This 177-nucleotide RNA was probed chemically with DMS and 2A3. 2A3 adducts were read by reverse transcription with SuperScript II with manganese. Values are in units of 0.01, from 0 to 300, in steps of 10. The RNA was probed in 150 mM KOAc, 10 mM MgCl2 and 150 mM bicine (pH 8.5) at 24 C. Source: RMDB library TTRDES, as collected in RNAgym.

[RMDB]
RNA sequence: GGGAACGACUCGAGUAGAGUCGAAAAGAUAUGGAUUCCAGGUGGGAGAUGGUGGUCGGAAACGACCAUACAUCAUCGAUCACCGGAAUCCUAAGUCAAACAAGAUGACUGUUCGCAGUCAUCUUGACACACUGAUCUCCUUCGGGAGAUCAGUGUGAAAAGAAACAACAACAACAAC
Reactivity to DMS in 0.01 (KOAc 150mM, MgCl2 10mM, bicine 150mM(pH8.5), 24C), signal-to-noise 1, nucleotides 027 to 126: g000a020u000a050u010g000g000a000u010u000c000c000a140g060g020u000g000g010g010a130g000a000u000g000g020u000g000g020u010c000g000g000a020a000a060c000g020a010c000c010a000u000a070c020a010u000c010a300u000c290g000a200u020c000a010c000c010g000g000a020a000u010c000c000u000a000a050g020u000c000a140a150a220c030a000a000g010a010u000g000a020c000u000g010u020u010c240g000c020a000g010u000c000a000u000c000u050u000g000a300
Reactivity to 2A3 in 0.01 (KOAc 150mM, MgCl2 10mM, bicine 150mM(pH8.5), 24C), signal-to-noise 1, nucleotides 027 to 126: g000a010u020a030u110g030g010a020u050u030c090c180a300g040g040u030g050g110g030a300g010a000u010g050g020u010g000g030u020c030g000g000a050a020a010c000g000a000c020c020a000u020a050c030a020u040c000a000u240c110g060a150u010c000a030c000c000g000g000a000a000u000c000c000u020a000a000g000u000c000a160a000a160c020a000a020g010a020u010g000a000c000u000g050u020u180c300g000c150a000g000u000c010a000u000c000u000u010g000a030